RNA sequence: GGGAACGACUCGAGUAGAGUCGAAAAGAACUUUGGCCGGCUCGGAAUAGAAUCAGGGGGUGCAAACUGCCCACUGGCAGAAAGGAUUAUAGCACAUGCGUACCCUAUUGCAAUACAGCCCGGCCAACAUAGACUACUCUAUUCGUAGAGUAGUCAAUACAGUAUGCACUUUCGAGUGCAUACUGUAAAAAGAAACAACAACAACAAC
Reactivity to DMS in 0.01 (KOAc 150mM, MgCl2 10mM, bicine 150mM(pH8.5), 24C), signal-to-noise 1, nucleotides 027 to 156: g060a140a050c080u000u000u000g010g040c010c030g000g050c040u030c060g000g010a200a150u000a140g000a100a100u000c080a100g010g000g010g010g060u000g080c090a010a080a170c110u020g030c010c000c100a090c190u020g000g000c000a020g000a300a080a120g000g000a060u000u000a110u020a180g040c070a030c000a220u000g000c180g040u000a040c020c000c000u000a050u000u000g000c050a110a160u000a090c020a060g000c100c010c030g010g000c000c000a000a020c070a090u000a130g010a060c030u000a000c000u000c000u000a040u000u000c140g000u000a020g000a020g020u000a000g000u010c000a010a080
Reactivity to 2A3 in 0.01 (KOAc 150mM, MgCl2 10mM, bicine 150mM(pH8.5), 24C), signal-to-noise 2, nucleotides 027 to 156: g020a060a010c050u010u040u000g000g000c000c000g000g000c030u050c110g050g020a080a020u140a120g070a020a050u120c070a110g020g010g000g000g000u030g000c010a040a070a080c030u040g000c020c020c050a210c170u150g000g000c000a010g060a010a090a000g070g070a060u170u060a080u260a120g110c010a020c000a080u070g060c060g070u100a060c000c000c000u030a050u040u060g000c040a030a040u040a130c000a060g010c040c100c010g000g000c000c000a000a000c000a000u050a010g010a010c000u000a000c000u010c000u000a080u080u070c170g120u070a010g000a000g000u000a000g000u010c020a020a000